[RMDB]
RNA sequence: GGGAACGACUCGAGUAGAGUCGAAAAUAGGCGAACGAGAGGCCCUCUCCUGUGCGGAGUUGUCACGCUGACAGAAUUGUUAUGAUGUCCGAUUCCGGUAGCAUCGCGGCGAUGCUUUCAUAGGACAUCUUAUGAACCCAAGGGCUUCGGGGAAGCACAUCCAGGCAUGAUUCGUCAUGCCUGGAUGAAAAGAAACAACAACAACAAC
Reactivity to DMS in 0.01 (KOAc 150mM, MgCl2 10mM, bicine 150mM(pH8.5), 24C), signal-to-noise 2, nucleotides 027 to 156: u010a110g020g040c020g020a040a030c080g020a130g020a050g020g010c030c000c010u000c050u010c010c000u020g020u000g040c070g020g000a100g030u000u000g020u000c080a210c010g030c000u020g030a190c030a100g000a080a220u000u000g050u000u010a080u020g010a060u000g020u000c020c000g020a240u010u000c110c040g040g010u000a030g000c010a020u000c020g020c120g060g010c190g010a010u000g010c010u000u000u000c020a070u000a120g010g000a040c030a010u000c010u010u000a040u020g000a080a120c010c040c030a100a100g020g040g010c000u000u000c030g020g020g020g040a080a050g010c060a170
Reactivity to 2A3 in 0.01 (KOAc 150mM, MgCl2 10mM, bicine 150mM(pH8.5), 24C), signal-to-noise 2, nucleotides 027 to 156: u140a010g000g020c000g000a030a090c060g000a090g010a010g140g030c010c000c000u050c000u000c000c010u090g150u230g160c080g030g010a030g010u090u090g050u050c010a030c080g040c060u130g040a040c000a010g230a260a150u180u090g070u130u150a080u170g000a000u000g000u000c000c010g030a030u210u000c100c030g030g000u020a000g000c010a010u010c010g090c170g290g070c160g010a010u000g000c000u060u080u060c060a090u070a050g010g000a020c000a010u000c000u020u000a020u020g030a010a030c020c020c010a010a030g000g000g000c000u000u000c020g000g000g010g000a070a030g080c030a010